Chemical mapping of a 207-nucleotide RNA with 2A3. For 2A3 the reverse transcriptase was SuperScript II with manganese. The data come from the RNA Mapping Database (RMDB), library OK3TST. Conditions: 150 mM KOAc, 10 mM MgCl2 and 150 mM bicine (pH 8.5), 24 C.
[RMDB]
RNA sequence: GGGAACGACUCGAGUAGAGUCGAAAAGUUAUGUGCCUUGUCUCUAUGAUUUACUUGAUCUUGAUCUACUUGAUGACCCUGCUUGUGAAUCUGCGGUCAAUUUGUUCUUCCCAGAGCAAUUAGGGGCGUUAGAUGGUCCGCAUGUGGAGGAGGAGGACUCCUAAGCUGUGUUCGCACAGCUUAGGAGAAAAGAAACAACAACAACAAC
Reactivity to 2A3 in 0.01 (KOAc 150mM, MgCl2 10mM, bicine 150mM(pH8.5), 24C), signal-to-noise 1, nucleotides 027 to 156: g070u130u080a080u250g050u080g020c020c020u140u070g020u040c000u000c000u050a050u100g060a090u100u020u070a090c000u060u080g090a090u090c020u030u110g030a090u000c020u040a040c040u050u090g030a030u090g060a120c060c000c000u030g010c080u070u020g010u060g130a050a040u020c000u010g000c010g060g070u010c020a020a020u000u040u150g030u030u040c010u080u050c000c000c000a010g010a020g000c040a040a100u140u110a170g000g000g010g020c050g000u060u050a010g020a070u060g030g040u040c140c080g040c080a040u100g010u040g050g010a000g050g020a010g060g000a000g030g020a020